[RMDB]
RNA sequence: GGGAACGACUCGAGUAGAGUCGAAAAUCGUCCUUCUUCUUUCUCAACAUUCCGACGAUGUUUCCCAGCCAGGGGUUUUCAUCCUCAAGUUUCUUGAUCUUCUUGUUGAUUCGCCGGAGCUCCUUCUAUGGCGCUAUGUUCGCAUAGCGCAAAAGAAACAACAACAACAAC
Reactivity to 2A3 in 0.01 (KOAc 150mM, MgCl2 10mM, bicine 150mM(pH8.5), 24C), signal-to-noise 5, nucleotides 027 to 129: u040c000g020u040c040c000u050u090c040u080u050c040u040u160u020c130u040c060a080a160c030a150u180u100c040c040g040a060c040g000a040u030g020u020u090u000c000c000c000a030g030c020c020a030g010g010g000g010u030u060u070u100c060a070u060c000c010u030c020a010a040g010u030u040u000c010u030u050g060a070u010c020u070u000c020u080u100g090u060u060g050a100u060u040c060g000c000c000g000g000a020g000c010u020c010c000u050u060c030u040a160u100g120
Reactivity to DMS in 0.01 (KOAc 150mM, MgCl2 10mM, bicine 150mM(pH8.5), 24C), signal-to-noise 4, nucleotides 027 to 129: u000c030g030u010c000c090u030u040c070u040u010c040u020u000u000c040u000c020a150a120c220a150u030u020c080c080g020a080c040g020a000u030g010u010u000u000c000c020c030a180g000c160c050a010g000g000g000g010u000u030u030u030c030a120u020c020c030u030c000a020a020g020u010u020u000c020u030u030g020a090u000c000u010u040c050u000u000g010u000u080g010a100u070u020c070g030c060c040g040g010a060g000c030u030c000c010u000u000c060u030a080u050g020
The record gives the reactivity of an RNA of 170 nucleotides to 2A3 and DMS. For 2A3, 9,121 sequencing reads were counted. The reactions ran in a buffer of 150 mM KOAc, 10 mM MgCl2 and 150 mM bicine (pH 8.5), at 24 C.